Background
Chemical mapping of a 177-nucleotide RNA with DMS and 2A3. DMS adducts were read by reverse transcription with MarathonRT.

RNA sequence: GGGAACGACUCGAGUAGAGUCGAAAACAAAAGUGCUCCUAGUGCACAUACUAGUAAACAAAAGGUCUUCGAUUGACCAGAAUCGUAAACAAAAGAGCUUGUACCGCUCAUGGUACUAAACAACAAAGGGAAUCUUAUACUUCGGUAUAAGAUUCCCAAAAGAAACAACAACAACAAC
Reactivity to DMS in 0.01 (KOAc 150mM, MgCl2 10mM, bicine 150mM(pH8.5), 24C), signal-to-noise 1, nucleotides 027 to 126: c000a070a120a070a030g050u000g000c050u000c200c000u000a070g050u000g000c080a140c160a100u000a030c030u000a010g000u020a110a250a080c020a020a040a160a060g000g000u010c030u000u000c100g000a010u010u000g000a020c080c040a230g000a000a080u000c020g060u000a030a060a060c020a060a100a040a070g000a000g020c030u000u000g000u000a030c040c030g000c020u000c190a000u040g000g000u000a000c010u040a000a020a000c210a040a090c170a050a050a040
Reactivity to 2A3 in 0.01 (KOAc 150mM, MgCl2 10mM, bicine 150mM(pH8.5), 24C), signal-to-noise 3, nucleotides 027 to 126: c050a000a100a000a010g130u070g010c030u070c030c000u050a000g050u040g050c010a010c040a210u260a010c030u010a000g260u110a080a120a040c090a030a230a020a060g100g010u000c000u050u080c080g160a130u000u100g040a040c030c000a020g050a000a010u070c060g060u100a140a130a040c010a000a050a090a000g070a090g050c010u040u080g040u040a000c000c000g030c040u130c180a100u100g000g000u000a010c000u030a050a020a090c200a000a050c080a000a170a000

The data come from the RNA Mapping Database (RMDB), library OK1LIB. The RNA was probed in 150 mM KOAc, 10 mM MgCl2 and 150 mM bicine (pH 8.5) at 24 C.